RNA sequence: GGGAACGACUCGAGUAGAGUCGAAAAGAAAGGUGAAAGCCCUUGAUACUGUAGUGGAAAUUAUAAAUAAGAAGAGUUCUGAGUUGCUUAAGCAGAACUAAAAUAAAAAGACAAGCAUUAUUACAAACAUGGCGAGGUAAGUUCGCUUACCUCGCAAGUACUUAUUGAAGUUCGCUUCAAUAAGUACAAAAGAAACAACAACAACAAC
Reactivity to DMS in 0.01 (KOAc 150mM, MgCl2 10mM, bicine 150mM(pH8.5), 24C), signal-to-noise 2, nucleotides 027 to 156: g010a040a020a070g060g030u020g000a110a070a170g030c030c020c030u000u010g000a110u000a130c060u010g010u000a120g010u000g010g010a040a020a090u000u000a000u020a030a050a080u000a050a150g000a110a180g000a080g000u000u010c000u000g010a070g010u010u000g000c060u000u020a060a160g000c040a030g000a020a050c030u020a040a030a040a070u010a040a080a110a130a190g000a080c040a030a040g010c030a030u000u000a040u000u000a070c110a040a030a060c040a070u000g050g040c000g010a010g020g020u010a000a010g030u000u020c270g000c020u000u000a000c000c010u000c020g010c000a000a030
Reactivity to 2A3 in 0.01 (KOAc 150mM, MgCl2 10mM, bicine 150mM(pH8.5), 24C), signal-to-noise 4, nucleotides 027 to 156: g010a010a000a000g000g000u030g010a050a010a000g020c000c010c000u010u020g040a060u050a140c090u080g070u170a030g040u030g020g060a020a050a060u110u060a070u150a180a070a010u110a040a040g060a040a020g050a020g050u010u010c010u020g050a060g050u130u110g100c050u130u050a070a020g010c000a010g000a010a000c030u030a010a040a030a010u120a010a080a030a000a000g060a010c050a020a000g000c000a000u020u040a020u050u080a140c100a040a060a000c030a090u100g110g000c010g000a010g000g010u010a000a000g000u020u060c100g000c060u000u000a000c000c000u000c000g010c000a000a000